[RMDB]
This 207-nucleotide RNA was probed chemically with DMS. The RNA was probed in 150 mM KOAc, 10 mM MgCl2 and 150 mM bicine (pH 8.5) at 24 C. For DMS, 3,034 sequencing reads were counted. Source: RMDB library RNAMAK, as collected in RNAgym. DMS adducts were read by reverse transcription with MarathonRT.

RNA sequence: GGGAACGACUCGAGUAGAGUCGAAAAGGGGUCGAAUGGUUUGUUCUAGCGAAUUGCAAGAAGGGAGGUCGAUAAGUACCUGAAGCCUCCACGGGUACUUUUGACGACCGAAGAACUUCUUGCAAUUCGCUAGAAUGAUCAUUCGACGGAGGCACCCGAAAUAACGGAAGUUCGCUUCCGUUAUUUCAAAAGAAACAACAACAACAAC
Reactivity to DMS in 0.01 (KOAc 150mM, MgCl2 10mM, bicine 150mM(pH8.5), 24C), signal-to-noise 1, nucleotides 027 to 156: g040g010g000g040u000c000g020a020a020u000g020g010u000u000u000g050u010u000c010u000a050g050c000g000a030a020u000u000g000c000a010a070g010a040a040g000g000g030a130g040g060u010c000g020a170u000a060a050g030u000a000c020c010u000g020a050a090g050c050c000u000c020c070a300c010g000g040g020u010a000c010u000u010u000u000g020a230c110g030a040c010c010g000a070a170g000a070a150c010u000u000c000u000u000g000c020a010a000u000u000c000g000c010u000a000g010a010a000u010g000a020u000c000a040u000u000c010g000a020c010g000g010a040g030g020c020a210c010c020c040